Conditions: 150 mM KOAc, 10 mM MgCl2 and 150 mM bicine (pH 8.5), 24 C. An RNA of 207 nucleotides, treated with 2A3 and DMS and read out base by base. In probing experiments dimethyl sulfate is read out at A N1 and C N3, which are open when not base-paired. Reactivities are given for positions 27 through 156.
RNA sequence: GGGAACGACUCGAGUAGAGUCGAAAAAGCUUCACCUUCUCUUCAUGCCUAAACACCCAAUCGUCUCCGAGAAGAACCUUCAGAGUCGACGAUCGGACUUUAACGACGACGUAUUGGAGAUUGUUAGCGAGGAAGAGAUAAGACAAAGCAACGUCUAGCUAUAAUCCAUGUUCGCAUGGAUUAUAGCAAAAGAAACAACAACAACAAC
Reactivity to 2A3 in 0.01 (KOAc 150mM, MgCl2 10mM, bicine 150mM(pH8.5), 24C), signal-to-noise 7, nucleotides 027 to 156: a000g030c030u080u070c050a090c040c000u040u020c010u000c000u000u000c010a040u190g030c000c030u120a120a070a000c000a010c000c000c000a000a020u000c000g000u010c000u000c000c020g010a010g010a070a020g020a120a110c010c010u090u090c060a070g030a130g270u130c080g090a150c090g040a080u030c020g030g020a030c010u050u060u060a060a020c030g040a010c060g010a000c010g080u190a030u010u000g030g010a070g010a080u090u120g010u010u010a010g000c020g050a070g090g050a040a000g010a000g010a010u060a020a010g010a010c060a050a100a010g030c040a050a040c060g030u020c040u050a020
Reactivity to DMS in 0.01 (KOAc 150mM, MgCl2 10mM, bicine 150mM(pH8.5), 24C), signal-to-noise 3, nucleotides 027 to 156: a130g040c000u000u000c020a100c070c040u000u000c010u000c000u020u010c020a230u010g010c030c030u000a080a050a050c020a090c040c010c040a090a090u000c000g010u000c000u000c000c010g010a300g000a060a080g010a070a110c000c010u000u000c050a150g000a200g060u000c100g030a160c100g000a080u000c020g000g010a280c020u010u010u000a030a230c110g000a060c040g000a030c030g000u000a040u000u000g010g000a110g000a070u010u000g000u010u000a080g020c020g000a110g020g010a040a040g010a060g000a090u000a050a050g010a170c030a060a040a090g020c030a080a080c090g010u000c040u030a290